[RMDB]
RNA sequence: GGGAACGACUCGAGUAGAGUCGAAAAGGAUCAGGCCGCGAUCCACAGCGCGCGCCAUGAUCGUACAUCGCUAUCGUACGCGCACAGAGUCUAUGCGCGGCCGCAGUGAUCCGCGGCCGAGCUCGGCACAAGUGCACCUCUUCGGAGGUGCACUUGUAAAAGAAACAACAACAACAAC
Reactivity to DMS in 0.01 (KOAc 150mM, MgCl2 10mM, bicine 150mM(pH8.5), 24C), signal-to-noise 1, nucleotides 027 to 126: g030g040a020u000c000a070g000g040c010c000g020c020g020a110u000c110c170a070c090a110g010c020g010c040g010c200g040c020c030a150u000g010a000u000c010g000u000a090c120a060u010c090g040c110u000a040u000c100g040u010a050c040g000c110g040c060a070c070a110g000a160g000u000c040u000a080u020g010c020g010c000g000g000c010c050g010c000a090g000u020g010a090u000c060c020g010c020g000g010c000c000g000a040g000c000u020c190g020g000c080
An RNA of 177 nucleotides, treated with DMS and read out base by base.
For DMS, 1,186 sequencing reads were counted.
Source: RMDB library OK2TRN, as collected in RNAgym.